RNA sequence: GGGAACGACUCGAGUAGAGUCGAAAAGAUAUGGAGCCAGUAGCAAGGCGAUCGGAAACGAUACCGCUGAUGACCUACGGCUCCUAAGUCAAACGCUGAAUGGUAGGUUCGCCUACCAUUCAGCGAACUAUGUGGAGGAGUUCGCUCCUCCACAUAGAAAAGAAACAACAACAACAAC
Reactivity to DMS in 0.01 (KOAc 150mM, MgCl2 10mM, bicine 150mM(pH8.5), 24C), signal-to-noise 4, nucleotides 027 to 126: g020a020u010a300u000g010g010a010g000c000c000a160g030u000a040g000c020a070a210g000g020c000g010a040u000c000g000g000a100a100a250c010g010a010u000a090c260c040g010c000u000g000a170u010g000a080c300c000u000a010c010g000g000c000u000c000c000u000a000a050g010u010c020a150a080a260c000g000c000u000g010a020a000u000g000g010u000a000g000g010u000u020c230g010c010c000u000a010c000c000a020u000u000c000a000g000c000g000a010a070
Reactivity to 2A3 in 0.01 (KOAc 150mM, MgCl2 10mM, bicine 150mM(pH8.5), 24C), signal-to-noise 2, nucleotides 027 to 126: g030a010u090a030u110g010g010a000g010c020c110a120g040u000a010g010c040a080a260g000g000c000g000a010u000c020g020g010a000a050a050c000g000a010u080a220c130c100g030c050u070g030a300u120g020a060c000c020u000a000c000g010g010c010u010c000c000u000a020a000g010u030c030a090a040a060c020g000c000u000g010a020a000u010g000g000u010a010g000g040u070u160c290g080c030c000u000a020c000c000a000u000u000c000a030g050c000g010a000a000
The record gives the reactivity of an RNA of 177 nucleotides to DMS and 2A3. Values cover nucleotides 27 to 126. It was measured as part of the RMDB library TTRDEL.